[RMDB]
The data come from the RNA Mapping Database (RMDB), library OK2TST. The record gives the reactivity of an RNA of 177 nucleotides to 2A3 and DMS. The 2A3 profile rests on 4,083 reads. The RNA was probed in 150 mM KOAc, 10 mM MgCl2 and 150 mM bicine (pH 8.5) at 24 C. For DMS the reverse transcriptase was MarathonRT. For DMS, 4,867 sequencing reads were counted. Reactivities are given for positions 27 through 126. For 2A3 the reverse transcriptase was SuperScript II with manganese.
RNA sequence: GGGAACGACUCGAGUAGAGUCGAAAAAGGGCAUAAAGCCCAAGCUAGUGACAUCGCAGCUACCACCUCCGACUUCUUGCGACGAAGUGAUACCGAUAGCACUGGCAAAGUCACCGUGGCCUAUGAACAAGACUAACUUCUUCGGAAGUUAGUCUUGAAAAGAAACAACAACAACAAC
Reactivity to 2A3 in 0.01 (KOAc 150mM, MgCl2 10mM, bicine 150mM(pH8.5), 24C), signal-to-noise 2, nucleotides 027 to 126: a000g080g000g000c130a090u260a200a160a020g000c000c000c010a000a010g000c010u020a010g000u010g060a100c000a020u030c030g070c090a060g030c040u030a020c000c020a040c000c010u040c040c010g060a080c020u070u090c050u200u230g020c080g040a030c030g000a080a000g010u020g030a030u030a050c060c000g000a020u020a030g000c000a000c020u010g010g000c040a060a040a010g020u030c010a030c160c010g010u040g060g010c000c040u090a110u170g020a070a030
Reactivity to DMS in 0.01 (KOAc 150mM, MgCl2 10mM, bicine 150mM(pH8.5), 24C), signal-to-noise 5, nucleotides 027 to 126: a090g010g010g010c000a160u000a090a110a260g010c010c000c010a080a090g010c020u000a030g000u000g010a050c060a040u010c060g000c170a120g020c150u000a040c030c000a060c040c040u000c030c030g020a160c070u000u000c140u000u000g000c080g010a300c300g000a040a040g010u000g020a030u010a040c040c020g000a040u000a050g000c010a010c020u010g010g010c030a040a060a050g020u000c070a090c020c030g020u000g010g000c040c040u010a080u000g010a110a170